[RMDB]
RNA sequence: GGGAACGACUCGAGUAGAGUCGAAAAGCCAUAAUUGUGUAGUCGGUGUACAUUGGCGCCAGCGCGCAUGUUAACUGACCGUAGCGCAUGUGUGCGUGUGCACCAUGGCCGCACAAUCAUGGUACGCCAGUGCACAUCAACGCCGCGCGCGUAACACCGACAAGGCGAGAUUCGUCUCGCCUUGUCGAAAAGAAACAACAACAACAAC
Reactivity to 2A3 in 0.01 (KOAc 150mM, MgCl2 10mM, bicine 150mM(pH8.5), 24C), signal-to-noise 2, nucleotides 027 to 156: g030c000c000a020u060a020a000u060u000g010u000g010u000a040g000u020c000g000g090u030g000u040a000c010a040u100u230g300g050c000g000c020c030a030g000c020g020c000g040c130a090u070g110u120u190a300a220c140u140g130a070c020c080g030u070a110g000c000g000c150a210u000g160u000g000u010g040c040g000u000g000u000g010c000a000c000c000a000u000g000g000c010c000g210c000a010c020a000a000u050c030a000u020g000g000u080a080c050g020c020c050a130g000u140g170c010a060c010a240u170c090a090a110c050g010c010c020g160c040g000c070g010c020g010u040a120a060c050a040c100